[RMDB]
The record gives the reactivity of an RNA of 177 nucleotides to 2A3 and DMS.

RNA sequence: GGGAACGACUCGAGUAGAGUCGAAAAUUGUUGGGGAGAGAUAAAGUGAAUGUGUGUGUCAAUACCACCCGCAGUUACGAUCAAACCUUCACCGGCUAAGGCUUCAGUAGCAGGACCCACGCAAAGAGUAUAACUCUAACUUCGGUUAGAGUUAUACAAAAGAAACAACAACAACAAC
Reactivity to 2A3 in 0.01 (KOAc 150mM, MgCl2 10mM, bicine 150mM(pH8.5), 24C), signal-to-noise 2, nucleotides 027 to 126: u080u060g030u040u060g000g000g040g000a040g000a010g000a050u120a130a250a020g030u020g040a040a030u030g000u000g010u000g000u000g030u050c040a110a080u080a220c040c010a010c010c010c010g010c000a010g020u020u030a010c010g010a020u040c040a000a030a100c000c000u040u020c030a060c030c010g000g030c020u040a090a030g050g030c010u080u070c050a070g020u090a020g010c010a020g000g030a060c000c030c010a000c040g070c060a130a120a000g080a050
Reactivity to DMS in 0.01 (KOAc 150mM, MgCl2 10mM, bicine 150mM(pH8.5), 24C), signal-to-noise 5, nucleotides 027 to 126: u010u000g010u000u000g010g000g010g000a300g010a200g020a070u010a060a080a150g020u000g000a040a040u000g010u000g010u000g020u000g000u000c100a070a090u000a100c300c020a030c020c020c000g010c040a010g010u000u010a020c060g000a060u000c040a020a250a230c050c010u000u000c040a110c030c030g000g010c040u000a060a080g010g000c090u010u000c090a050g010u020a040g020c020a050g010g010a130c030c010c010a050c240g010c160a070a050a060g010a130
Notes: Conditions: 150 mM KOAc, 10 mM MgCl2 and 150 mM bicine (pH 8.5), 24 C.